RNA sequence: GGGAACGACUCGAGUAGAGUCGAAAAGAUAUGGAAAUAUCUAUGCGUCAUCGAUCAGCUUCGGAAACGAAGCUGGGAGACGACAUAGAGUAUUUCCUAAGUCAAAAUCAGUCCUUCGGGACUGAAACUAAUUGGGUUAGUUCGCUAACCCAAUUAGAAAAGAAACAACAACAACAAC
Reactivity to 2A3 in 0.01 (KOAc 150mM, MgCl2 10mM, bicine 150mM(pH8.5), 24C), signal-to-noise 2, nucleotides 027 to 126: g030a040u100a090u140g030g000a010a030a010u020a000u000c000u000a010u020g000c000g000u000c030a300u290c100g160a160u050c020a030g000c000u030u010c000g030g050a080a070a060c010g020a000a000g000c000u000g010g010g010a010g000a000c010g040a100c010a000u010a000g010a000g070u030a010u010u010u020c000c000u000a220a020g060u020c010a000a020a010a300u030c010a000g010u010c010c000u040u160c300g050g000g000a000c000u000g010a030a000a000
Reactivity to DMS in 0.01 (KOAc 150mM, MgCl2 10mM, bicine 150mM(pH8.5), 24C), signal-to-noise 3, nucleotides 027 to 126: g000a050u000a300u020g000g000a020a010a020u000a020u010c000u000a000u000g010c050g020u000c010a190u000c130g020a260u000c000a000g000c010u000u000c000g010g000a130a120a220c000g020a030a000g020c000u010g000g000g000a200g010a010c010g010a130c000a010u000a000g000a040g020u010a010u000u000u000c000c010u010a030a170g000u000c040a120a080a160a180u000c010a010g000u010c000c000u000u020c250g030g030g000a020c010u000g000a030a080a210

Chemical mapping of a 177-nucleotide RNA with 2A3 and DMS. For DMS, 3,576 sequencing reads were counted. The RNA was probed in 150 mM KOAc, 10 mM MgCl2 and 150 mM bicine (pH 8.5) at 24 C. 2A3 adducts were read by reverse transcription with SuperScript II with manganese.